[RMDB]
RNA sequence: GGGAACGACUCGAGUAGAGUCGAAAAUGACGCCUAUAACUGGAUGAAGCAUAUUAUACAAAAUGGUUUUGUAGGCAACCUUAACAUGUAUAGUCUUGUCUUUAUCGUUACACGAUAAUCAAUUUAUAAAACAGCUCCCCCUUCGGGGGGAGCUGAACAAUUGUGAAUGGUUCGCCAUUCACAAUUGAAAAGAAACAACAACAACAAC
Reactivity to 2A3 in 0.01 (KOAc 150mM, MgCl2 10mM, bicine 150mM(pH8.5), 24C), signal-to-noise 1, nucleotides 027 to 156: u080g040a030c060g000c020c000u090a070u030a150a130c100u070g050g000a010u000g010a050a000g010c000a000u000a030u010u000a020u030a020c020a030a100a160a280u110g020g000u000u080u010u080g030u020a030g050g000c010a000a000c010c000u030u020a050a020c020a090u040g010u000a050u000a020g010u020c000u110u040g060u020c000u000u050u000a000u050c010g040u070u100a130c250a030c100g080a100u110a170a090u140c020a030a050u040u150u100a220u180a060a090a000a000c000a000g000c000u020c000c030c000c030c020u000u060c050g000g000g000g000g010g000a000g010c000u000g000a010a000